[RMDB]
RNA sequence: GGGAACGACUCGAGUAGAGUCGAAAAUCAACGCACGAUACAGCUGCACACAGAAGCUGCCUAUAGAUUUACCCGAGGAGUGGAUCCUCAAGGCGUAUUACCCGUGUUACAUGCUGCUAUCCAUAUGGCCGAUGCGUCGAUUCGUCGACGCAUCGGCAAAAGAAACAACAACAACAAC
Reactivity to 2A3 in 0.01 (KOAc 150mM, MgCl2 10mM, bicine 150mM(pH8.5), 24C), signal-to-noise 2, nucleotides 027 to 126: u070c010a090a040c050g000c000a020c100g010a000u040a090c000a030g010c000u030g060c060a020c000a000c050a120g130a050a010g010c050u050g000c060c010u070a150u100a090g120a100u020u180u250a080c090c060c040g030a050g050g020a030g010u170g030g210a150u020c000c000u020c030a040a040g010g010c020g000u010a170u050u120a090c060c000c020g010u020g010u000u050a150c070a060u210g000c000u030g030c010u030a020u140c070c040a010u040a120u080g100
Chemical mapping of a 177-nucleotide RNA with 2A3.
Values cover nucleotides 27 to 126.
Source: RMDB library OK1LIB, as collected in RNAgym.
The reactions ran in a buffer of 150 mM KOAc, 10 mM MgCl2 and 150 mM bicine (pH 8.5), at 24 C.
The 2A3 profile rests on 672 reads.